[RMDB]
RNA sequence: GGGAACGACUCGAGUAGAGUCGAAAAUCUGAUUAUUCCGACGAUGUUCCCCAGCCAGGGAUUUUCUUCCUCGAGUUUCUUGAUGGUCUUCCUGGUCUUCCGGAGAUCUUUCUCGAGCUCCUCCGCCGUAGCCGCCCCUUCGGGGGCGGCAAAAGAAACAACAACAACAAC
Reactivity to 2A3 in 0.01 (KOAc 150mM, MgCl2 10mM, bicine 150mM(pH8.5), 24C), signal-to-noise 2, nucleotides 027 to 129: u050c070u120g040a130u000u130a100u170u030c090c000g040a050c110g010a100u150g020u010u010c030c000c000c090a000g000c000c000a000g050g000g010a030u000u000u090u270c050u150u000c030c000u000c000g080a060g160u000u070u110c140u000u030g000a000u090g010g000u000c000u070u000c000c060u000g010g010u000c000u020u000c100c030g050g000a030g010a020u030c010u000u020u000c030u000c000g000a010g060c000u000c000c000u060c040c010g000c000c000g090u020a000
Reactivity to DMS in 0.01 (KOAc 150mM, MgCl2 10mM, bicine 150mM(pH8.5), 24C), signal-to-noise 1, nucleotides 027 to 129: u000c170u020g000a090u010u010a130u090u070c000c000g000a090c100g000a100u020g000u010u030c000c000c010c150a090g000c060c110a130g000g180g000a040u010u010u010u010c000u000u000c060c040u000c150g010a090g050u000u080u000c020u020u000g000a040u020g140g030u000c000u000u000c000c000u000g010g000u070c000u050u060c070c020g000g000a120g000a120u010c080u010u010u010c050u020c130g000a050g040c130u000c000c000u000c000c030g040c000c050g050u000a000
Background
Structure probing data (2A3 and DMS) for a 170-nucleotide construct. Reactivities are rounded to 0.1 and cut off at 0 and 3. The RNA was probed in 150 mM KOAc, 10 mM MgCl2 and 150 mM bicine (pH 8.5) at 24 C. 2A3 adducts were read by reverse transcription with SuperScript II with manganese. The 2A3 profile rests on 1,093 reads. The data come from the RNA Mapping Database (RMDB), library 15KLIB.